RNA sequence: GGGAACGACUCGAGUAGAGUCGAAAAGAGGAGGAUCUCCAGCUAAAGAGUGGAGGAAAUCUCGGAAAGCUUCCCCCAAGAAGAACUGGGACGCUCUCAAGAAGGAGGAGAUUUCCCGAAAGCUGGACUAGCUAAUGUACUUCGGUACAUUAGCUAGAAAAGAAACAACAACAACAAC
Reactivity to 2A3 in 0.01 (KOAc 150mM, MgCl2 10mM, bicine 150mM(pH8.5), 24C), signal-to-noise 1, nucleotides 027 to 126: g080a040g020g020a030g010g010a040u010c000u000c040c000a010g000c010u090a040a150a040g140a040g040u140g040g070a100g040g020a030a030a010u020c020u010c030g050g020a080a040a000g010c010u040u000c010c000c000c000c000a050a000g040a080a000g010a090a070c030u030g000g000g000a000c020g010c010u010c000u000c030a010a110g080a070a020g130g060a020g070g000a000g000a030u010u010u030c000c000c000g040a070a080a000g010c000u010g000g000a010
Reactivity to DMS in 0.01 (KOAc 150mM, MgCl2 10mM, bicine 150mM(pH8.5), 24C), signal-to-noise 2, nucleotides 027 to 126: g000a120g000g000a040g000g010a120u010c090u000c000c010a030g000c030u010a060a130a140g000a100g000u020g000g020a190g020g010a080a010a010u000c010u000c030g010g000a100a040a070g020c020u000u010c110c020c000c180c120a050a070g030a120a080g020a140a060c150u000g010g000g010a030c120g010c030u000c030u000c010a080a050g020a130a090g010g010a060g040g000a020g020a030u000u000u010c000c010c020g000a050a070a070g020c000u000g030g000a180
The record gives the reactivity of an RNA of 177 nucleotides to 2A3 and DMS. The data come from the RNA Mapping Database (RMDB), library 15KREP. 2A3 adducts were read by reverse transcription with SuperScript II with manganese. Conditions: 150 mM KOAc, 10 mM MgCl2 and 150 mM bicine (pH 8.5), 24 C.